An RNA of 177 nucleotides, treated with DMS and 2A3 and read out base by base. For 2A3 the reverse transcriptase was SuperScript II with manganese. It was measured as part of the RMDB library OK2TRN. The 2A3 profile rests on 984 reads.

RNA sequence: GGGAACGACUCGAGUAGAGUCGAAAAAGCUGCCCUAAAUCGGCGGAAAGGACCCCGCUAUCGGGAGCGGCUAGCAGCGAGGGUUGCCGCUCCAGCCGCGCUAUGAAGCAGUCAUAGCAGAUUUACACGAUAGGUGCUGAUUCGUCAGCACCUAUCGAAAAGAAACAACAACAACAAC
Reactivity to DMS in 0.01 (KOAc 150mM, MgCl2 10mM, bicine 150mM(pH8.5), 24C), signal-to-noise 2, nucleotides 027 to 126: a060g000c050u000g000c000c020c060u040a040a140a070u010c160g030g010c020g010g000a060a130a060g000g000a140c080c050c040c050g030c090u000a090u000c120g010g030g010a030g050c000g020g010c000u010a040g030c120a050g000c110g030a090g010g000g010u000u000g020c000c010g000c000u000c020c010a080g000c060c060g000c160g000c000u000a010u000g010a060a220g000c140a110g000u000c020a010u000a040g020c010a100g000a120u010u030u010a090c160a190
Reactivity to 2A3 in 0.01 (KOAc 150mM, MgCl2 10mM, bicine 150mM(pH8.5), 24C), signal-to-noise 1, nucleotides 027 to 126: a040g080c050u050g040c000c000c000u020a130a160a030u110c060g010g020c060g020g000a070a010a040g160g050a120c000c010c000c020g000c080u110a090u100c020g050g020g010a020g000c000g000g000c010u100a050g050c050a000g050c030g070a140g000g280g010u060u060g000c030c010g000c010u010c000c020a030g020c010c000g040c010g010c000u000a000u020g010a050a050g140c130a030g040u030c000a010u000a010g010c020a010g010a050u200u170u140a110c140a020